The record gives the reactivity of an RNA of 177 nucleotides to 2A3 and DMS.
Values are in units of 0.01, from 0 to 300, in steps of 10.
The reactions ran in a buffer of 150 mM KOAc, 10 mM MgCl2 and 150 mM bicine (pH 8.5), at 24 C.
Values cover nucleotides 27 to 126.
[RMDB]
RNA sequence: GGGAACGACUCGAGUAGAGUCGAAAAUACACUUUACGUGUGCUGGUUUCAUUACUUUGUCCCAAACCAGGCACGCGUAAUUAAAGGCCAGUUUGGCCAGCUCCGCGUUAUCGAUGGUCACCAAUAAAUUCUUCCCUAAAUUCGUUUAGGGAAGAAUAAAAGAAACAACAACAACAAC
Reactivity to 2A3 in 0.01 (KOAc 150mM, MgCl2 10mM, bicine 150mM(pH8.5), 24C), signal-to-noise 6, nucleotides 027 to 126: u090a010c030a020c070u030u030u010a000c010g000u010g000u000g000c000u010g000g030u050u060u060c090a100u090u190a170c100u150u150u230g070u100c000c020c000a010a000a000c030c000a060g140g060c010a000c000g000c000g000u000a000a000u050u090a110a060a030g010g000c010c020a080g100u080u210u160g060g000c000c010a000g020c000u010c010c010g010c040g030u040u060a100u090c040g020a050u070g030g010u040c010a030c060c020a050a020u110a150a140
Reactivity to DMS in 0.01 (KOAc 150mM, MgCl2 10mM, bicine 150mM(pH8.5), 24C), signal-to-noise 8, nucleotides 027 to 126: u010a120c130a150c120u000u000u000a000c000g020u000g020u000g010c000u000g000g010u000u000u000c130a090u010u010a080c140u010u010u000g010u000c020c020c030a070a020a020c010c010a030g020g020c010a000c000g010c010g010u000a000a010u000u000a060a100a080g010g010c010c010a110g010u000u010u000g020g010c010c000a080g010c040u000c020c040g020c060g010u000u000a060u000c060g010a060u010g010g010u000c030a080c050c050a070a090u010a060a080